Chemical mapping of a 207-nucleotide RNA with DMS and 2A3. For 2A3, 1,814 sequencing reads were counted. 2A3 is a SHAPE reagent: it acylates the 2'-hydroxyl of flexible nucleotides of all four kinds. It was measured as part of the RMDB library OK3TST.
[RMDB]
RNA sequence: GGGAACGACUCGAGUAGAGUCGAAAACAAAAACAUUAUGAUGAUUCAGGGAAUAAUCCACGUUAUGCAUUUAAGCCGUGUCGGGCACAGAAUCAAUUGCUAAAGAGAGAUGUAUAUGUUUUUCAAUCCACUAUAUCAUUCAAGUUUUACGGCAGUCAGUUAUGGAUACGUUCGCGUAUCCAUAACUAAAAGAAACAACAACAACAAC
Reactivity to DMS in 0.01 (KOAc 150mM, MgCl2 10mM, bicine 150mM(pH8.5), 24C), signal-to-noise 2, nucleotides 027 to 156: c010a070a020a070a070a070c030a090u020u000a070u000g010a210u000g000a120u000u000c010a120g030g000g010a090a110u000a060a140u000c050c010a050c030g030u000u000a040u000g030c050a100u010u000u010a090a160g020c070c000g010u000g020u000c070g030g010g000c000a090c040a050g020a130a030u000c060a060a080u000u000g050c030u010a090a100a120g000a190g020a140g010a080u000g010u010a000u000a060u000g000u000u000u000u000u000c100a080a220u010c040c040a060c030u020a080u000a060u000c010a060u000u000c060a070a140g000u000u000u000u000a070c030g000g010c020a060g000u000c140
Reactivity to 2A3 in 0.01 (KOAc 150mM, MgCl2 10mM, bicine 150mM(pH8.5), 24C), signal-to-noise 4, nucleotides 027 to 156: c030a040a070a040a010a010c070a050u190u160a090u280g060a020u020g030a010u040u100c050a060g010g000g080a060a110u090a090a050u080c030c020a040c050g040u030u060a030u070g050c040a060u060u070u150a070a010g010c020c000g040u050g100u120c080g050g000g000c030a030c000a060g120a030a030u080c050a050a110u100u060g020c030u110a060a110a010g140a000g000a010g000a020u050g040u030a050u010a030u100g030u040u020u000u040u080c050a070a020u030c000c010a040c050u060a060u040a030u240c040a020u060u100c050a050a040g040u020u060u100u120a040c000g050g000c010a040g070u140c040